The data come from the RNA Mapping Database (RMDB), library OK2TST. This 177-nucleotide RNA was probed chemically with DMS and 2A3. Reactivities are rounded to 0.1 and cut off at 0 and 3. 2A3 adducts were read by reverse transcription with SuperScript II with manganese.

RNA sequence: GGGAACGACUCGAGUAGAGUCGAAAAAACCAGUCUUACAUAGACCUCAAGCAGUUGGGCACCUAUGAGUACACGGUCAAAUGGCCGUGGUACGUAUGGCUGGGUAUGAUUGCAGGACUAGUAGGCCCAUUCACGGAAGUUUCGACUUCCGUGAAUGAAAAGAAACAACAACAACAAC
Reactivity to DMS in 0.01 (KOAc 150mM, MgCl2 10mM, bicine 150mM(pH8.5), 24C), signal-to-noise 4, nucleotides 027 to 126: a110a050c000c010a060g010u000c000u000u010a300c050a030u010a040g010a140c300c000u010c080a040a040g000c200a070g010u010u000g000g010g010c080a080c120c010u000a020u000g000a170g000u000a010c000a000c000g000g010u000c010a150a120a100u000g000g010c010c000g010u000g000g020u010a000c010g020u020a050u010g000g010c040u010g000g000g010u020a050u010g000a100u010u000g020c040a060g020g000a050c060u010a050g000u000a050g000g010c050c050
Reactivity to 2A3 in 0.01 (KOAc 150mM, MgCl2 10mM, bicine 150mM(pH8.5), 24C), signal-to-noise 3, nucleotides 027 to 126: a000a000c010c000a010g000u010c010u040u040a080c020a070u040a020g070a110c000c010u050c070a040a050g020c020a080g090u100u030g010g020g030c020a090c040c010u040a020u050g050a040g030u010a020c000a000c000g010g000u010c020a170a250a300u300g010g000c000c010g030u020g060g000u030a000c000g020u030a040u100g020g030c030u000g020g020g020u100a110u130g160a100u010u140g000c050a020g040g010a040c030u030a010g100u030a020g030g050c000c020